[RMDB]
RNA sequence: GGGAACGACUCGAGUAGAGUCGAAAAGCCAUUUCCGAAUUCCUAUGCAGUGCGCGAAACUUUAGCAUUACUGCAAAAGUUAUUUCCUGUUAGGCAAUGUGAAAACAGUGUCUAUCGCAACCGGUCGCAGGGAUCAUAUUUUCGAAUAUGAUCCCUGAAAAGAAACAACAACAACAAC
Reactivity to DMS in 0.01 (KOAc 150mM, MgCl2 10mM, bicine 150mM(pH8.5), 24C), signal-to-noise 5, nucleotides 027 to 126: g000c040c090a110u000u000u000c040c030g010a120a140u000u000c040c020u010a180u000g000c030a040g010u010g010c190g000c060g010a110a060a080c120u010u000u000a150g020c010a070u000u020a090c140u000g010c000a040a040a070a080g000u000u000a090u010u000u000c010c020u000g010u010u000a010g000g010c020a020a030u000g010u000g000a110a060a160a020c000a010g000u000g010u000c000u000a010u000c030g000c090a060a050c140c050g000g000u010c200g010
Reactivity to 2A3 in 0.01 (KOAc 150mM, MgCl2 10mM, bicine 150mM(pH8.5), 24C), signal-to-noise 4, nucleotides 027 to 126: g030c000c000a060u050u090u000c040c010g020a040a100u070u040c000c010u070a060u060g040c000a010g020u020g030c050g000c010g090a090a090a120c060u110u130u110a080g000c010a050u040u190a070c050u050g000c000a020a010a030a010g020u020u030a100u050u050u020c000c030u040g020u040u010a010g000g000c000a020a020u020g020u020g060a090a020a010a010c010a010g000u000g000u000c010u010a020u010c030g000c080a060a100c040c040g040g080u090c060g030
Chemical mapping of a 177-nucleotide RNA with DMS and 2A3. Reactivities are given for positions 27 through 126. The reactions ran in a buffer of 150 mM KOAc, 10 mM MgCl2 and 150 mM bicine (pH 8.5), at 24 C. For DMS, 5,468 sequencing reads were counted. Source: RMDB library OK2TRN, as collected in RNAgym. For 2A3, 5,316 sequencing reads were counted.